[RMDB]
Chemical mapping of a 207-nucleotide RNA with DMS and 2A3. Source: RMDB library OK3TST, as collected in RNAgym.

RNA sequence: GGGAACGACUCGAGUAGAGUCGAAAAUAUCUCAUGGUCUGAUGUUUCAAUGGUACUAAAAAUGUGGUAUUCUUUCAAUUGGGCUCGGCGAGAUCAACUGCUAACUUUUGAAACAAAUGUCUACGAAACUAGAGUUUUUUGCAUAGCAUGAUACAUACACUCCUCUACAGUUCGCUGUAGAGGAGUGAAAAGAAACAACAACAACAAC
Reactivity to DMS in 0.01 (KOAc 150mM, MgCl2 10mM, bicine 150mM(pH8.5), 24C), signal-to-noise 1, nucleotides 027 to 156: u030a100u000c010u010c000a210u000g040g000u010c060u000g020a060u020g010u000u000u000c050a080a160u000g010g030u010a100c090u020a030a070a080a070a140u000g010u000g020g000u000a060u010u000c010u000u010u000c000a060a120u000u000g020g010g030c010u000c040g040g000c050g000a080g010a030u010c050a060a080c050u010g020c030u000a050a080c060u000u000u000u000g000a100a060a130c080a030a090a100u030g010u000c030u010a110c030g000a020a020a050c050u000a100g010a160g010u010u000u000u000u000u000g010c020a060u010a110g030c040a050u000g010a190u000a070c060a070u000a300
Reactivity to 2A3 in 0.01 (KOAc 150mM, MgCl2 10mM, bicine 150mM(pH8.5), 24C), signal-to-noise 2, nucleotides 027 to 156: u110a060u010c040u010c010a040u070g050g000u080c040u020g050a070u100g120u000u070u060c040a060a010u050g050g000u000a080c040u080a020a060a050a070a150u200g020u050g000g020u090a130u080u080c060u010u130u080c070a090a100u040u070g000g030g060c000u010c040g070g000c020g000a010g000a040u050c050a030a060c060u010g030c060u080a020a100c000u030u060u050u160g100a100a060a000c030a010a150a060u100g020u000c010u020a040c060g070a070a040a000c020u020a080g030a040g100u000u020u020u050u210u090g070c070a060u040a080g000c010a010u040g010a000u060a130c000a000u050a020